Structure probing data (2A3 and DMS) for a 207-nucleotide construct. The reactions ran in a buffer of 150 mM KOAc, 10 mM MgCl2 and 150 mM bicine (pH 8.5), at 24 C. For DMS, 4,883 sequencing reads were counted. It was measured as part of the RMDB library M2RFPK. For DMS the reverse transcriptase was MarathonRT.

[RMDB]
RNA sequence: GGGAACGACUCGAGUAGAGUCGAAAAAACUCAGCUAGGGAGAGUAUAACAUUCAUGUUGACGAGACCUAGACGAAACACAGAGGAAAAUUAUUAAUCACUGGAUAGUAUUAGUAAUGUCUCUGUGUAAAACUCUUCUACGUUCGCGUAGAAGAGAAGUGUUGGAUAUAGUUCGCUAUAUCCAACACAAAAGAAACAACAACAACAAC
Reactivity to 2A3 in 0.01 (KOAc 150mM, MgCl2 10mM, bicine 150mM(pH8.5), 24C), signal-to-noise 6, nucleotides 027 to 156: a000a000c010u000c010a010g000c000u000a000g020g030g010a050g010a040g040u090a110u090a300a020c060a050u140u230c090a080u250g010u030u050g050a040c040g010a010g050a050c000c000u000a000g010a030c020g000a000a040a010c000a000c000a000g020a020g000g030a140a200a170a010u000u000a010u000u000a000a000u020c040a010c030u050g060g110a170u300a300g010u010a000u000u000a000g010u000a010a010u010g100u000c000u000c000u000g000u000g000u000a000a000a000a000c000u000c000u000u000c000u000a000c000g020u010u050c240g000c000g070u000a000g000a000a000g000a000g000a050a020
Reactivity to DMS in 0.01 (KOAc 150mM, MgCl2 10mM, bicine 150mM(pH8.5), 24C), signal-to-noise 2, nucleotides 027 to 156: a070a060c050u000c030a100g010c020u000a020g020g000g000a240g000a190g000u010a030u000a040a030c040a070u010u000c150a130u000g010u000u000g020a110c000g020a300g010a050c010c000u000a030g010a250c100g000a140a140a040c000a020c000a010g000a040g030g010a050a070a030a050u000u000a010u000u000a010a020u000c120a100c050u000g000g010a170u000a100g020u000a020u010u000a010g010u000a010a010u000g010u000c020u000c000u000g020u000g020u000a010a020a040a090c020u000c000u000u000c000u000a010c000g020u000u010c300g040c020g010u000a000g000a000a000g010a010g030a030a070